[RMDB]
RNA sequence: GGGAACGACUCGAGUAGAGUCGAAAAAACGUUUCGACGUUUAACUUACCUUUGUGGUGGCACAGAUGGUUGUCAGAUAACCCAGCCCAUUGGGCUGAAGGUUAUCUUGGAUUUACCAUCUAGCCACCACUCUGGUUCGAAAUCUGUUCGCAGAUAACGUAUUAAUACAUUUCGAUGUAUUAAUACGAAAAGAAACAACAACAACAAC
Reactivity to DMS in 0.01 (KOAc 150mM, MgCl2 10mM, bicine 150mM(pH8.5), 24C), signal-to-noise 3, nucleotides 027 to 156: a020a010c020g010u000u000u010c150g030a120c020g030u010u000u010a060a140c060u000u000a060c000c000u000u010u000g020u000g020g010u000g010g000c000a120c130a040g010a020u000g000g010u000u000g010u000c010a060g010a020u000a010a010c000c010c010a020g020c000c000c010a300u000u000g040g030g000c000u000g010a050a090g020g000u000u000a000u000c000u000u010g030g010a040u010u000u000a020c010c000a020u000c010u000a050g010c000c000a030c000c000a000c000u000c020u000g010g010u000u000c050g000a110a090a070u000c020u000g010u000u000c180g060c040a050g020a070u000a080a300
Reactivity to 2A3 in 0.01 (KOAc 150mM, MgCl2 10mM, bicine 150mM(pH8.5), 24C), signal-to-noise 9, nucleotides 027 to 156: a000a000c100g000u130u100u080c200g070a050c020g010u020u060u070a110a040c020u040u070a010c000c000u020u010u000g000u000g000g000u010g000g000c030a130c060a300g000a000u000g000g010u010u010g010u020c000a000g000a010u000a000a000c000c010c000a000g020c010c020c070a300u090u300g000g000g000c000u010g030a110a020g010g000u000u000a000u000c000u010u100g070g010a030u160u090u170a010c000c000a000u000c000u000a010g010c000c000a000c000c000a000c000u000c000u000g000g010u020u040c030g080a090a080a040u000c010u020g070u080u110c240g030c110a020g030a040u100a100a030
Annotation
This 207-nucleotide RNA was probed chemically with DMS and 2A3. For 2A3 the reverse transcriptase was SuperScript II with manganese. For 2A3, 17,466 sequencing reads were counted. Conditions: 150 mM KOAc, 10 mM MgCl2 and 150 mM bicine (pH 8.5), 24 C.